This 177-nucleotide RNA was probed chemically with 2A3 and DMS. The RNA was probed in 150 mM KOAc, 10 mM MgCl2 and 150 mM bicine (pH 8.5) at 24 C. Values cover nucleotides 27 to 126. Source: RMDB libraries RFM100 and RFMREP, as collected in RNAgym. Values are in units of 0.01, from 0 to 300, in steps of 10.
[RMDB]
RNA sequence: GGGAACGACUCGAGUAGAGUCGAAAAAGAAAAUGUUGCAAAAAAGCUAAGCCAGCGGGCAGAGGAAAACGCCUAUAGCCGGCGAGUGAAGACGAACCAUCGGCUGCCGUGUUCUUUUUCCUCUUGGAGUAUUUUAGUGUUUCGACACUAAAAUACUAAAAGAAACAACAACAACAAC
Reactivity to 2A3 in 0.01 (KOAc 150mM, MgCl2 10mM, bicine 150mM(pH8.5), 24C), signal-to-noise 7, nucleotides 027 to 126: a000g090a010a070a020a020u140g010u060u080g020c060a020a070a030a020a070a080g030c040u080a110a010g020c000c010a010g040c050g010g020g000c020a030g030a090g100g090a060a090a020a020c030g010c010c010u120a120u110a110g010c030c020g020g000c020g020a030g020u090g060a070a040g070a040c040g020a040a040c030c010a090u080c030g030g000c010u010g010c000c020g040u040g040u050u040c020u030u060u010u020u020c000c010u020c020u010u050g030g020
Reactivity to DMS in 0.01 (KOAc 150mM, MgCl2 10mM, bicine 150mM(pH8.5), 24C), signal-to-noise 7, nucleotides 027 to 126: a060g010a070a050a060a060u010g000u020u010g020c050a000a060a080a080a080a140g000c050u000a060a110g010c020c000a060g040c050g010g010g020c040a040g010a080g000g010a060a060a090a090c140g010c050c030u010a090u030a100g010c040c040g000g010c030g000a100g010u000g000a130a100g000a060c070g010a080a130c130c080a070u010c050g000g000c020u000g000c060c070g000u020g010u000u000c020u000u000u000u000u010c010c020u000c030u010u010g010g020